This 177-nucleotide RNA was probed chemically with 2A3 and DMS. The reactions ran in a buffer of 150 mM KOAc, 10 mM MgCl2 and 150 mM bicine (pH 8.5), at 24 C. DMS adducts were read by reverse transcription with MarathonRT. The 2A3 profile rests on 5,220 reads.
RNA sequence: GGGAACGACUCGAGUAGAGUCGAAAAAGAGUACCGCCGCAAGGUUUCCGGUUGUGGAUGGCAGCGUGUGUGUCGCCCCGUCGUCUAGUGCUGGUUCUAGGGCUGGGGCGUCAGCAUCCAGGUAAAAAUAGUAUGUAGGUUUCGACCUACAUACUAUAAAAGAAACAACAACAACAAC
Reactivity to 2A3 in 0.01 (KOAc 150mM, MgCl2 10mM, bicine 150mM(pH8.5), 24C), signal-to-noise 4, nucleotides 027 to 126: a000g090a010g030u030a020c020c000g020c010c010g030c060a040a070g110g000u040u050u050c020c020g040g020u070u110g080u100g090g040a080u050g050g030c050a050g000c060g040u070g020u030g030u020g010u060c010g000c010c010c010c000g010u020c020g030u010c010u020a020g010u010g150c110u170g110g080u160u030c010u000a010g030g020g000c060u130g050g020g000g010c000g000u010c010a010g010c000a000u030c020c020a010g060g070u160a060a080a030a020
Reactivity to DMS in 0.01 (KOAc 150mM, MgCl2 10mM, bicine 150mM(pH8.5), 24C), signal-to-noise 6, nucleotides 027 to 126: a080g010a130g010u000a090c040c030g010c030c020g000c090a070a070g010g010u000u000u000c040c020g010g000u000u010g020u010g010g010a060u000g000g010c090a060g020c100g010u010g010u010g010u000g010u000c010g000c010c010c010c010g010u000c030g000u010c010u000a020g000u000g010c080u010g000g000u000u000c010u000a020g000g000g010c010u000g030g000g000g010c010g010u000c020a060g010c030a030u000c040c040a080g010g000u010a030a070a090a090